[RMDB]
RNA sequence: GGGAACGACUCGAGUAGAGUCGAAAACUGCAGGUCAACGGACUCUCUUCAGAUCAGCUAUUGCAGAAGAAAGGUCAGCCAAGCGCUCUGGGCCGGGUCGACUGUAUAUAGGAGCUUCUGAUUUCAACCAGAAGCUAACUCUCUCCGAAACAAUGAGUGGUCCAGUAAUAUUCGUAUUACUGGACCAAAAAGAAACAACAACAACAAC
Reactivity to DMS in 0.01 (KOAc 150mM, MgCl2 10mM, bicine 150mM(pH8.5), 24C), signal-to-noise 1, nucleotides 027 to 156: c000u000g030c060a000g000g000u000c020a050a050c050g010g020a180c030u020c070u030c050u000u010c050a010g020a080u030c040a110g030c060u000a090u000u010g010c020a150g000a070a130g020a080a030a110g000g000u000c010a150g000c010c030a070a160g050c030g030c030u000c040u010g040g050g000c040c060g030g030g060u000c000g020a070c030u000g030u000a080u000a130u000a100g000g000a050g020c010u000u000c020u010g000a010u000u000u000c170a100a050c020c010a010g000a070a000g020c010u000a000a010c030u000c010u000c010u010c000c000g010a100a100a100c100a040a060u010g000a150g050
Reactivity to 2A3 in 0.01 (KOAc 150mM, MgCl2 10mM, bicine 150mM(pH8.5), 24C), signal-to-noise 2, nucleotides 027 to 156: c030u080g030c050a050g000g040u070c030a070a080c090g110g000a000c030u010c010u030c010u130u110c090a050g020a110u030c030a020g010c060u090a110u130u160g000c000a010g020a080a020g000a080a060a000g000g010u090c000a000g000c010c030a140a000g050c020g010c080u030c050u080g060g060g000c020c000g030g040g000u070c050g020a030c030u020g060u030a070u030a010u110a190g130g000a040g030c040u020u000c010u010g100a150u090u300u260c090a080a060c050c000a000g010a010a000g010c010u010a010a010c000u000c040u020c010u000c030c000g120a130a120a090c050a030a130u180g000a030g050
Notes: Conditions: 150 mM KOAc, 10 mM MgCl2 and 150 mM bicine (pH 8.5), 24 C. Chemical mapping of a 207-nucleotide RNA with DMS and 2A3.